[RMDB]
RNA sequence: GGGAACGACUCGAGUAGAGUCGAAAAGAUAUGGAUAUUGUGUUGAUCAACAGCUACUUCGGAAACGAAGUAGACAUGAUCUCACACUGUAUCCUAAGUCAAACACAUGGCGUUCGCGCCAUGUGAACUUCUUUAUACGGUUCGCCGUAUAAAGAAGAAAAGAAACAACAACAACAAC
Reactivity to 2A3 in 0.01 (KOAc 150mM, MgCl2 10mM, bicine 150mM(pH8.5), 24C), signal-to-noise 5, nucleotides 027 to 126: g030a010u110a050u200g000g000a000u000a020u030u070g000u010g040u050u160g020a040u080c040a040a200c020a150g050c000u000a000c000u000u000c000g040g020a070a040a080c010g000a010a000g010u000a000g020a000c000a020u080g000a020u030c000u060c060a010c000a010c000u010g010u010a000u000c000c000u020a170a020g080u040c080a140a100a060c000a000c000a010u000g000g010c040g030u070u080c300g020c010g000c110c000a000u000g000u010g000a010a010
Reactivity to DMS in 0.01 (KOAc 150mM, MgCl2 10mM, bicine 150mM(pH8.5), 24C), signal-to-noise 7, nucleotides 027 to 126: g020a050u010a300u010g000g010a020u000a000u000u000g020u000g010u000u010g000a010u000c020a040a090c300a190g000c000u000a000c000u010u010c010g000g000a130a090a220c010g010a010a000g000u000a000g000a030c110a170u000g010a020u000c030u000c300a020c000a020c180u000g010u000a010u000c000c000u000a050a160g010u010c040a120a150a300c010a000c000a000u000g010g000c000g020u000u020c290g020c010g010c000c000a000u000g010u000g000a040a120
Conditions: 150 mM KOAc, 10 mM MgCl2 and 150 mM bicine (pH 8.5), 24 C. This 177-nucleotide RNA was probed chemically with 2A3 and DMS. For DMS, 8,582 sequencing reads were counted. The 2A3 profile rests on 18,630 reads.